About this RNA:
The record gives the reactivity of an RNA of 177 nucleotides to DMS and 2A3. For DMS, 1,265 sequencing reads were counted. The RNA was probed in 150 mM KOAc, 10 mM MgCl2 and 150 mM bicine (pH 8.5) at 24 C.
RNA sequence: GGGAACGACUCGAGUAGAGUCGAAAAGAUGUUAUCCGUCAGGUUAUUACCCGAACCAAUACGGUUACUGGCCGCCCCUAUUAUGAUGAAAAAGCCAUUAUGGCUUGGGAAACGGGUAACGAACUGGGUACUGAACGAUCUUCGGAUCGUUCAGUACAAAAGAAACAACAACAACAAC
Reactivity to DMS in 0.01 (KOAc 150mM, MgCl2 10mM, bicine 150mM(pH8.5), 24C), signal-to-noise 2, nucleotides 027 to 126: g010a130u000g020u000u000a020u000c020c000g010u000c080a060g000g020u000u000a020u000u000a080c110c000c000g000a070a160c050c080a160a080u000a060c060g010g020u000u000a020c190u000g000g000c040c000g000c130c010c000c020u000a120u000u060a120u010g020a170u010g010a030a060a030a050a050g030c000c000a220u010u030a210u000g020g000c010u000u010g010g000g000a030a130a010c020g000g000g020u010a020a000c000g010a040a050c130u010g000g010
Reactivity to 2A3 in 0.01 (KOAc 150mM, MgCl2 10mM, bicine 150mM(pH8.5), 24C), signal-to-noise 1, nucleotides 027 to 126: g100a100u210g040u040u020a000u010c000c020g000u010c050a040g000g000u020u030a010u100u020a030c000c010c040g020a060a070c000c010a050a070u190a180c050g010g000u000u020a070c050u050g050g000c030c000g020c010c000c000c040u030a070u250u030a080u300g190a010u060g060a020a050a000a070a020g020c000c060a020u140u150a080u280g030g000c000u010u020g000g010g000a030a010a000c000g040g110g000u020a020a010c000g040a070a010c050u100g070g060